[RMDB]
RNA sequence: GGGAACGACUCGAGUAGAGUCGAAAACGGGUCGCCUUGAAGCUAGAACGAUUCAGUCGAUUACCGGAAAUUCCGUAAAGGUCACGGUUGAUUGGUCUGCUAACCCUGCAAAGCAAGGCAUCUUCAUCUUUGAGAUGGCGGAACUUGUAGCAGAAACUACACAGUUUUGUUUCGACAAAACUGUGUAAAAAGAAACAACAACAACAAC
Reactivity to 2A3 in 0.01 (KOAc 150mM, MgCl2 10mM, bicine 150mM(pH8.5), 24C), signal-to-noise 3, nucleotides 027 to 156: c030g000g000g000u010c020g020c000c040u040u200g020a030a000g020c040u090a050g070a270a100c090g070a070u050u030c000a000g010u010c020g030a070u050u140a130c000c020g000g040a060a100a090u100u080c020c000g010u050a100a030a070g080g030u080c030a010c090g010g000u030u040g040a160u030u050g040g010u020c020u030g020c040u050a080a090c000c000c010u010g010c010a020a000a090g020c010a010a010g030g000c050a040u010c000u080u030c010a060u000c040u070u160u210g130a170g000a060u020g030g060c050g050g010a040a070c020u010u020g030u050a020g020c020a000g020a050a050a000c010
Reactivity to DMS in 0.01 (KOAc 150mM, MgCl2 10mM, bicine 150mM(pH8.5), 24C), signal-to-noise 2, nucleotides 027 to 156: c010g010g010g030u000c000g000c060c050u020u010g010a060a060g010c040u010a110g020a110a140c120g000a100u000u010c010a080g020u000c000g020a130u000u000a060c080c010g000g000a050a090a190u000u000c040c000g000u020a050a070a090g030g010u000c080a060c020g000g010u000u010g000a160u010u000g020g000u000c120u030g000c020u000a170a120c120c050c010u010g050c020a100a160a120g040c010a020a170g030g010c050a030u000c020u000u020c030a080u000c070u010u000u000g010a100g000a020u000g020g030c020g010g020a090a070c030u000u000g010u000a170g010c030a050g020a160a100a080c060
The record gives the reactivity of an RNA of 207 nucleotides to 2A3 and DMS.
Values cover nucleotides 27 to 156.
High 2A3 reactivity points to a flexible backbone, as in loops and unpaired stretches.
The 2A3 profile rests on 1,617 reads.